[RMDB]
RNA sequence: GGGAACGACUCGAGUAGAGUCGAAAAGAUCACUCGUACGAACGAUCUCGUGUUCUCGUGAGUACUCGAUCUCUCGUGUUCGAACGAGAUCGAGUUCUCGAACGUGAGAUCUCUCGUUCGAACUCACGAACUCACGUACGAGUACGUACGUGAUCGACUAGAGAUGUAUGUUCGCAUACAUCUCUAGAAAAGAAACAACAACAACAAC
Reactivity to DMS in 0.01 (KOAc 150mM, MgCl2 10mM, bicine 150mM(pH8.5), 24C), signal-to-noise 3, nucleotides 027 to 156: g000a140u010c000a070c040u000c020g010u000a030c040g010a080a090c040g010a090u000c010u000c010g030u000g010u000u000c000u000c070g000u010g010a050g020u000a040c010u000c010g000a030u010c010u010c020u000c040g010u000g000u000u000c170g010a060a170c070g010a030g020a020u000c030g000a060g030u000u000c100u010c010g020a020a020c020g030u040g010a030g010a090u000c090u000c040u000c010g010u000u000c020g030a050a300c030u010c060a100c030g000a080a080c060u000c000a010c010g020u000a030c000g000a300g030u010a040c030g040u010a000c030g020u000g000a020u000c010g020a220
Reactivity to 2A3 in 0.01 (KOAc 150mM, MgCl2 10mM, bicine 150mM(pH8.5), 24C), signal-to-noise 9, nucleotides 027 to 156: g030a030u060c030a010c060u050c040g010u020a000c010g030a190a020c050g020a140u020c020u020c070g010u020g010u060u030c080u030c080g100u090g010a000g000u030a010c010u010c010g020a030u000c030u000c010u010c060g070u090g140u300u250c110g050a100a060c060g000a010g000a000u000c000g000a000g000u020u020c030u000c010g000a010a000c010g010u020g020a060g050a170u030c040u000c000u000c050g000u020u020c000g000a030a020c020u020c030a040c030g050a090a040c030u010c030a010c020g010u040a010c030g040a030g100u050a020c010g000u020a000c040g000u010g010a030u050c010g020a020
Structure probing data (DMS and 2A3) for a 207-nucleotide construct.
Values cover nucleotides 27 to 156.
For DMS, 6,592 sequencing reads were counted.
The reactions ran in a buffer of 150 mM KOAc, 10 mM MgCl2 and 150 mM bicine (pH 8.5), at 24 C.